[RMDB]
Record summary
Chemical mapping of a 207-nucleotide RNA with 2A3. For 2A3, 1,204 sequencing reads were counted. The RNA was probed in 150 mM KOAc, 10 mM MgCl2 and 150 mM bicine (pH 8.5) at 24 C. It was measured as part of the RMDB library OK3TST.
RNA sequence: GGGAACGACUCGAGUAGAGUCGAAAAAGUGGCGCGGCCGCAGGACAUUCCGGCCAACGCGGUGGCGAAGCUGGCGUUUCACCACGAGGGCAACGGCGGCCGCUCGUCGCACAUGUGGGGCGAGCUGGACGGCAUGAGGAUCGAGUCGGCCAGCAGCGUAAAUGGUUGGUUUCGACCAACCAUUUACAAAAGAAACAACAACAACAAC
Reactivity to 2A3 in 0.01 (KOAc 150mM, MgCl2 10mM, bicine 150mM(pH8.5), 24C), signal-to-noise 1, nucleotides 027 to 156: a000g130u090g020g060c060g000c000g030g000c020c020g000c000a040g000g090a070c070a150u180u180c110c070g040g000c010c030a020a020c010g000c020g050g000u010g020g000c040g020a040a030g050c100u120g090g000c010g000u020u110u230c000a000c000c000a010c000g000a040g000g030g030c040a130a090c070g050g000c000g000g020c000c010g000c010u000c020g000u010c000g050c020a020c020a070u190g050u060g070g020g000g020c030g000a070g010c000u010g000g010a020c000g000g000c010a040u220g050a080g030g080a060u090c010g000a000g030u010c010g000g010c000c000a010g000c050a010g020c030